[RMDB]
RNA sequence: GGGAACGACUCGAGUAGAGUCGAAAAGCUUAGCAGUUCGCUGCUAAGCGACGUUGACGGCCCUGACCGUUGACAAAUCCCAAUGAGGACAGGUGACUGACAGAUAUUAAGCGUUCGCGCUUAAUAACAACUGUCUAAGGUUCGCCUUAGACAGUUGAAAAGAAACAACAACAACAAC
Reactivity to DMS in 0.01 (KOAc 150mM, MgCl2 10mM, bicine 150mM(pH8.5), 24C), signal-to-noise 5, nucleotides 027 to 126: g010c000u000u000a010g010c000a020g010u000u020c200g030c000u010g010c000u000a000a000g010c000g000a020c180g020u000u000g000a010c010g010g000c020c120c120u010g000a150c000c000g010u010u010g010a010c030a090a120a110u000c000c000c000a120a090u020g000a120g010g020a110c050a040g000g010u010g010a130c060u000g010a080c100a090g000a170u000a010u000u000a010a010g010c000g020u010u010c220g020c010g000c000u000u000a000a000u000a030a170
Reactivity to 2A3 in 0.01 (KOAc 150mM, MgCl2 10mM, bicine 150mM(pH8.5), 24C), signal-to-noise 5, nucleotides 027 to 126: g000c000u000u000a010g000c000a010g000u060u160c210g070c130u020g000c000u000a000a000g000c010g000a010c060g010u000u010g010a000c000g020g010c000c080c060u080g090a280c010c000g000u000u000g010a010c000a010a100a030u040c030c000c010a000a100u240g060a090g060g040a030c020a030g000g070u050g070a070c030u040g040a010c030a070g130a060u040a000u120u020a000a010g010c010g020u040u120c280g010c000g010c090u000u010a000a000u020a050a020
Chemical mapping of a 177-nucleotide RNA with DMS and 2A3. Values are in units of 0.01, from 0 to 300, in steps of 10. DMS adducts were read by reverse transcription with MarathonRT. 2A3 adducts were read by reverse transcription with SuperScript II with manganese. For DMS, 6,595 sequencing reads were counted. For 2A3, 9,523 sequencing reads were counted.